[RMDB]
RNA sequence: GGGAACGACUCGAGUAGAGUCGAAAAGGAUCUUUUGGAUUCCUUCGAAUGCUUGGAAAUACAGGGUUUGAGAUUGCCGUCCUACAUCUGGGGCGAUAAUCCAGAUGAGGAACCCAAAGAAUCCAAAAUAUUGGCAUACGUUCGCGUAUGCCAAUAUAAAAGAAACAACAACAACAAC
Reactivity to DMS in 0.01 (KOAc 150mM, MgCl2 10mM, bicine 150mM(pH8.5), 24C), signal-to-noise 1, nucleotides 027 to 126: g000g000a010u000c010u000u000u000u000g000g010a030u010u000c010c000u000u000c020g020a080a080u010g000c040u010u000g010g010a150a110a160u020a140c010a010g010g010g030u000u000u000g000a100g000a010u000u000g010c070c020g000u000c000c000u000a110c270a140u000c190u010g020g000g000g010c010g020a000u000a010a030u000c010c000a140g000a050u000g000a000g000g000a010a010c010c010c000a000a010a020g000a020a020u000c000c000a120a060a080
Reactivity to 2A3 in 0.01 (KOAc 150mM, MgCl2 10mM, bicine 150mM(pH8.5), 24C), signal-to-noise 1, nucleotides 027 to 126: g000g000a010u030c000u000u140u030u050g000g060a100u020u000c010c010u000u030c050g170a160a040u140g120c010u030u040g050g060a180a280a040u230a200c040a040g060g010g000u060u040u020g110a130g000a060u020u000g050c000c000g000u000c000c000u020a080c030a190u120c160u160g020g000g010g010c030g010a010u050a010a000u000c000c000a000g010a060u060g000a060g000g000a000a010c000c000c010a010a000a000g020a030a020u030c060c110a050a050a050